An RNA of 177 nucleotides, treated with DMS and 2A3 and read out base by base. 2A3 is a SHAPE reagent: it acylates the 2'-hydroxyl of flexible nucleotides of all four kinds. DMS adducts were read by reverse transcription with MarathonRT. For 2A3, 824 sequencing reads were counted. The data come from the RNA Mapping Database (RMDB), library OK2TRN. The RNA was probed in 150 mM KOAc, 10 mM MgCl2 and 150 mM bicine (pH 8.5) at 24 C. Reactivities are rounded to 0.1 and cut off at 0 and 3. Values cover nucleotides 27 to 126.
[RMDB]
RNA sequence: GGGAACGACUCGAGUAGAGUCGAAAAACAACUUAACGAGUGCGCAACGUCUCAUUAUUUUGAAAUGUUAAUCGUGAUGUGCAUACAUGUGACAUUUAUAUGAACGAAAAAUACAUGAUGGAAUAUACUAUUGCUGAGCUUUCGAGCUCAGCAAUAGAAAAGAAACAACAACAACAAC
Reactivity to DMS in 0.01 (KOAc 150mM, MgCl2 10mM, bicine 150mM(pH8.5), 24C), signal-to-noise 1, nucleotides 027 to 126: a090c050a040a070c100u000u000a100a090c080g000a140g040u020g050c070g020c100a100a040c060g000u000c010u000c020a010u000u000a080u010u000u000u000g030a030a070a050u000g000u010u000a090a080u000c070g020u000g010a030u010g030u030g020c070a050u010a060c160a060u030g000u000g000a090c070a020u000u010u000a050u020a130u050g000a070a070c150g010a000a040a040a050a090u000a000c070a030u010g010a100u000g000g020a070a050u020a120u010a110
Reactivity to 2A3 in 0.01 (KOAc 150mM, MgCl2 10mM, bicine 150mM(pH8.5), 24C), signal-to-noise 2, nucleotides 027 to 126: a020c020a030a050c040u080u220a040a000c030g060a010g100u080g030c000g030c030a100a060c020g060u000c020u000c080a050u020u100a160u060u230u120u110g140a060a040a070u050g020u020u090a070a150u080c040g050u030g040a080u080g050u020g070c000a020u090a140c050a060u110g020u060g070a020c000a020u080u120u100a160u080a070u240g050a020a030c100g050a180a050a000a000a180u130a020c000a000u060g020a040u050g020g050a070a020u120a000u000a120